[RMDB]
The record gives the reactivity of an RNA of 177 nucleotides to 2A3 and DMS. The RNA was probed in 150 mM KOAc, 10 mM MgCl2 and 150 mM bicine (pH 8.5) at 24 C. The DMS profile rests on 1,937 reads.
RNA sequence: GGGAACGACUCGAGUAGAGUCGAAAAACGUUGCAAGACGCUUAUGAUAUUGAUGCGCUGAGUGCAUUGGAUAUUAUCAUUACUUGCCAGGGGGGGGAUUAUACCAACGAAAUUUAUCCAAAGCUGCCGUAUCAUUACACUUCGGUGUAAUGAUACGAAAAGAAACAACAACAACAAC
Reactivity to 2A3 in 0.01 (KOAc 150mM, MgCl2 10mM, bicine 150mM(pH8.5), 24C), signal-to-noise 1, nucleotides 027 to 126: a000c020g010u020u040g000c020a080a000g060a060c050g000c060u130u110a030u100g030a020u020a000u040u040g010a020u010g020c070g070c180u180g210a090g110u130g020c010a010u010u030g130g000a020u000a040u120u070a000u080c010a010u010u120a100c020u020u020g030c070c020a050g000g000g030g000g000g000g000g000a010u060u030a020u120a070c020c010a020a000c010g050a000a080a000u180u170u050a020u000c000c000a060a010a000g040c050u050g000c040
Reactivity to DMS in 0.01 (KOAc 150mM, MgCl2 10mM, bicine 150mM(pH8.5), 24C), signal-to-noise 2, nucleotides 027 to 126: a080c040g010u000u000g000c060a040a040g020a110c070g030c110u010u020a030u000g000a050u000a020u010u000g010a020u000g000c010g020c100u020g000a160g030u000g030c010a020u000u000g010g010a030u010a020u000u000a040u010c110a060u000u000a080c080u000u010g000c030c080a090g020g000g000g020g010g010g000g000a120u010u010a060u010a110c060c060a020a080c120g000a060a050a090u000u000u000a040u020c040c050a030a070a120g000c110u000g010c150